[RMDB]
RNA sequence: GGGAACGACUCGAGUAGAGUCGAAAAGACACUAUUAUAAUAUUGACAGAUUGAGAGCUCUUUCAUAAUUCCGUGUUAGUGGUGCAGCUGGUGGGAUAAUCUGUUUGGUUUAUUCCGAUAAUAGAUGCAGUCGCACCAUCUUCGGAUGGUGCGACUGAAAAGAAACAACAACAACAAC
Reactivity to 2A3 in 0.01 (KOAc 150mM, MgCl2 10mM, bicine 150mM(pH8.5), 24C), signal-to-noise 1, nucleotides 027 to 126: g080a020c060a000c050u070a130u220u010a130u090a270a150u150a070u000u080g000a100c030a000g230a110u010u070g000a100g000a010g160c000u000c060u090u000u000c000a010u140a110a210u210u000c010c000g000u010g000u070u000a000g000u000g090g100u120g060c000a000g020c090u010g070g120u050g100g070g000a000u000a000a010u000c000u030g130u000u000u250g010g010u160u000u000a050u140u040c000c010g000a000u050a150a080u000a080g230a260u300g030